The record gives the reactivity of an RNA of 177 nucleotides to 2A3 and DMS.
RNA sequence: GGGAACGACUCGAGUAGAGUCGAAAAGUUUCUAAGUUCGCUUAGAAACAAAUCCAGCGCGGAAACGAACGUGGCUGACCCUAUUCGUUAAAGAUUUUCAAAAAACGUUCCUCUUCGGAGGAACGAACCGAUAUAAUCGGUUCGCCGAUUAUAUCGGAAAAGAAACAACAACAACAAC
Reactivity to 2A3 in 0.01 (KOAc 150mM, MgCl2 10mM, bicine 150mM(pH8.5), 24C), signal-to-noise 4, nucleotides 027 to 126: g010u020u000u000c000u000a000a020g010u020u080c140g020c100u000u010a000g000a000a010a010c010a000a060a000u070c050c000a000g010c000g020c010g010g080a270a170a080c090g060a060a000c010g060u050g220g040c020u040g060a080c030c000c000u080a210u080u160c090g100u080u240a080a070a050g100a190u080u100u130u240c140a040a070a010a010a060a100c010g000u010u000c000c000u000c010u030u020c200g100g000a000g010g000a000a000c000g000a000a000
Reactivity to DMS in 0.01 (KOAc 150mM, MgCl2 10mM, bicine 150mM(pH8.5), 24C), signal-to-noise 4, nucleotides 027 to 126: g000u000u000u000c010u000a010a000g020u000u010c190g010c000u010u000a020g000a010a010a000c000a050a100a090u000c140c050a050g010c030g010c010g000g000a080a100a120c270g010a050a090c020g000u000g010g030c060u010g010a100c070c030c010u000a090u000u010c050g000u010u010a040a070a190g000a130u000u000u000u000c080a010a060a080a030a070a130c020g010u000u000c000c000u000c000u000u020c130g020g010a010g000g000a000a000c000g000a030a040
It was measured as part of the RMDB library M2PK50. For 2A3 the reverse transcriptase was SuperScript II with manganese. Values cover nucleotides 27 to 126. Conditions: 150 mM KOAc, 10 mM MgCl2 and 150 mM bicine (pH 8.5), 24 C.